[RMDB]
RNA sequence: GGGAACGACUCGAGUAGAGUCGAAAAUGGCAACGUGAUUCUAAUGUUGGCGAUUCAGCGUAUUUCUGACGCAAAAUUGAUAACUUCUCCAUUGACGUCUAGUCAGACUAAACUGGCUCGGAUACAAGAAAGCUGCAUAAUUCGUUAUGCAGCUUUCAAAAGAAACAACAACAACAAC
Reactivity to 2A3 in 0.01 (KOAc 150mM, MgCl2 10mM, bicine 150mM(pH8.5), 24C), signal-to-noise 7, nucleotides 027 to 126: u050g030g000c030a040a010c040g020u070g040a120u110u050c040u150a070a090u080g060u070u050g130g000c020g040a080u050u050c020a020g010c020g040u090a130u030u220u000c050u060g030a010c000g000c000a020a040a080a080u080u110g020a020u020a090a030c010u050u020c030u000c030c020a060u030u080g040a040c060g020u000c020u030a000g010u020c010a000g000a090c070u210a070a100a110c010u010g020g000c010u010c040g030g010a030u050a150c020a090a010
Reactivity to DMS in 0.01 (KOAc 150mM, MgCl2 10mM, bicine 150mM(pH8.5), 24C), signal-to-noise 5, nucleotides 027 to 126: u020g000g010c200a030a040c090g010u010g000a120u020u010c050u000a110a070u010g010u010u010g000g020c030g020a100u000u000c080a100g000c170g010u010a060u010u010u020c080u030g010a050c020g020c050a040a030a040a050u010u020g000a060u000a050a060c140u000u000c080u010c040c060a100u000u010g010a080c110g010u010c020u000a020g010u020c020a000g000a120c150u020a050a110a110c010u000g000g030c010u000c120g040g010a060u010a100c160a080a110

Conditions: 150 mM KOAc, 10 mM MgCl2 and 150 mM bicine (pH 8.5), 24 C. Structure probing data (2A3 and DMS) for a 177-nucleotide construct. For 2A3 the reverse transcriptase was SuperScript II with manganese. The data come from the RNA Mapping Database (RMDB), libraries RFM100 and RFMREP. Reactivities are given for positions 27 through 126.